[RMDB]
RNA sequence: GGGAACGACUCGAGUAGAGUCGAAAAGCAUGGCCGCCGUCAGCUCGUACCGUGAGGCGUCCUGUUAAGUCAGGCAACGAGCGAGACCCGCACUCCUAAUUGCCAGCAACACCCUCGUGGUGGUUGGGCACUCUAAUUCCUUCGGGAAUUAGAGUGCAAAAGAAACAACAACAACAAC
Reactivity to DMS in 0.01 (KOAc 150mM, MgCl2 10mM, bicine 150mM(pH8.5), 24C), signal-to-noise 1, nucleotides 027 to 126: g050c100a060u000g050g010c020c050g000c040c040g000u010c010a250g020c040u010c000g010u000a300c000c010g020u000g000a290g010g000c070g050u010c010c000u000g020u000u000a060a170g010u000c000a030g040g010c230a140a030c030g010a090g010c060g030a130g030a100c010c060c060g010c040a090c050u020c010c040u000a050a040u010u010g000c000c010a100g000c000a090a060c010a010c000c040c010u000c190g000u050g000g000u000g010g000u000u000g010g010
Reactivity to 2A3 in 0.01 (KOAc 150mM, MgCl2 10mM, bicine 150mM(pH8.5), 24C), signal-to-noise 1, nucleotides 027 to 126: g000c020a040u160g050g050c050c020g030c020c020g070u030c010a020g000c030u010c040g070u050a040c050c010g080u100g050a030g040g060c040g030u130c000c000u000g040u010u040a160a140g300u020c010a000g010g060c000a010a010c010g010a000g040c040g000a090g020a130c040c030c020g000c000a020c020u050c000c000u070a140a120u050u060g020c000c000a000g030c020a060a070c000a010c010c040c010u190c140g170u300g000g000u010g030g020u030u030g050g030
This 177-nucleotide RNA was probed chemically with DMS and 2A3. DMS adducts were read by reverse transcription with MarathonRT. The 2A3 profile rests on 839 reads. The RNA was probed in 150 mM KOAc, 10 mM MgCl2 and 150 mM bicine (pH 8.5) at 24 C. The data come from the RNA Mapping Database (RMDB), library RFMREP.